[RMDB]
RNA sequence: GGGAACGACUCGAGUAGAGUCGAAAAGAAAGGCAGCCAGUGCAGCCCACGAAGCCAUUCGAGGCAUGCUUUUGCAUGCCGCCCACGACUGAGGGCAGCUGCGGCACUGAGGGCAGCUGCCGAAAGAGGUACGCGUAUGAUUCGUCAUACGCGUACCAAAAGAAACAACAACAACAAC
Reactivity to DMS in 0.01 (KOAc 150mM, MgCl2 10mM, bicine 150mM(pH8.5), 24C), signal-to-noise 1, nucleotides 027 to 126: g000a040a040a130g000g040c000a070g000c010c050a050g010u000g010c030a170g010c030c020c040a240c130g020a130a090g000c050c030a140u000u000c030g000a120g010g000c010a030u000g000c000u000u000u010u020g020c000a000u000g000c000c000g030c050c010c020a060c170g010a040c110u000g000a160g030g000g000c000a060g020c030u000g000c000g000g010c040a070c020u000g000a150g000g010g000c060a030g000c000u000g000c000c000g000a000a050a090g010a220
Reactivity to 2A3 in 0.01 (KOAc 150mM, MgCl2 10mM, bicine 150mM(pH8.5), 24C), signal-to-noise 2, nucleotides 027 to 126: g020a010a030a020g030g000c000a010g030c020c010a000g010u020g020c030a050g150c000c040c010a020c070g080a100a000g010c020c000a040u020u020c010g020a040g010g000c000a010u020g010c030u210u250u180u300g010c030a000u000g000c000c020g010c020c000c000a020c060g140a020c080u170g110a130g050g000g010c000a000g000c010u000g010c000g010g000c010a020c070u090g020a260g050g030g010c000a020g000c010u030g000c000c010g010a010a020a000g180a030

Structure probing data (DMS and 2A3) for a 177-nucleotide construct. DMS (dimethyl sulfate) methylates the pairing face of unpaired adenines and cytosines. The reactions ran in a buffer of 150 mM KOAc, 10 mM MgCl2 and 150 mM bicine (pH 8.5), at 24 C.